[RMDB]
Structure probing data (DMS) for a 177-nucleotide construct. The RNA was probed in 150 mM KOAc, 10 mM MgCl2 and 150 mM bicine (pH 8.5) at 24 C. It was measured as part of the RMDB library OK2TST.

RNA sequence: GGGAACGACUCGAGUAGAGUCGAAAAGAAAAACCACACAGGAAAUCCACAAUCUUACUGUAAAUGUGGACUCACCCAAUUAAUUACGAUGUCAUUGUAGUUGGAGCUGGGCACGCAGGUUGCGAGGCCACCACCAAUUCUUCGGAAUUGGUGGUGGAAAAGAAACAACAACAACAAC
Reactivity to DMS in 0.01 (KOAc 150mM, MgCl2 10mM, bicine 150mM(pH8.5), 24C), signal-to-noise 1, nucleotides 027 to 126: g000a100a190a160a130a140c030c000a070c060a060c020a050g000g000a040a220a130u000c070c050a000c070a090a120u000c180u010u000a070c080u000g010u000a090a080a210u000g000u000g000g030a030c080u000c060a060c050c000c040a090a010u000u020a030a090u000u000a090c030g040a050u000g000u000c280a020u010u000g010u030a030g020u010u000g050g020a080g010c120u000g000g000g030c200a070c030g010c100a030g010g010u010u010g000c050g000a110g010g010